[RMDB]
RNA sequence: GGGAACGACUCGAGUAGAGUCGAAAAAAUGCUGCUCGUCAACAAUUCCAACUUCAUGGACGUGAGAACGCAACAAAGGUAGUGAUCCUCAUCACGAACGGAAAGAAUCGAGGAAACGCUGCAGCUGUAACCAGGAGGUUUUCGAACCUCCUGGUUAAAAAGAAACAACAACAACAAC
Reactivity to 2A3 in 0.01 (KOAc 150mM, MgCl2 10mM, bicine 150mM(pH8.5), 24C), signal-to-noise 1, nucleotides 027 to 126: a040a010u100g010c000u000g000c020u000c020g020u040c010a030a070c010a030a130u050u010c030c000a040a050c040u080u050c050a140u170g100g030a030c030g020u040g000a050g000a090a020c080g060c040a060a000c010a060a170a040g140g010u070a050g060u020g050a070u000c000c060u000c030a090u030c010a000c000g000a050a000c020g080g030a050a070a050g000a030a050u070c080g060a050g020g110a070a000a010c000g040c110u040g000c000a010g000c020u030g070
Reactivity to DMS in 0.01 (KOAc 150mM, MgCl2 10mM, bicine 150mM(pH8.5), 24C), signal-to-noise 2, nucleotides 027 to 126: a090a080u010g000c010u000g000c080u010c020g090u000c080a040a090c060a060a160u000u020c000c020a060a230c090u000u000c050a120u000g010g010a130c100g020u010g010a090g010a020a030c060g030c010a090a100c080a170a170a140g000g030u000a080g010u010g000a090u000c100c030u000c080a080u000c020a080c030g000a040a130c120g000g000a040a090a110g000a030a010u000c050g010a160g000g000a160a090a060c010g010c110u000g000c000a020g000c030u010g010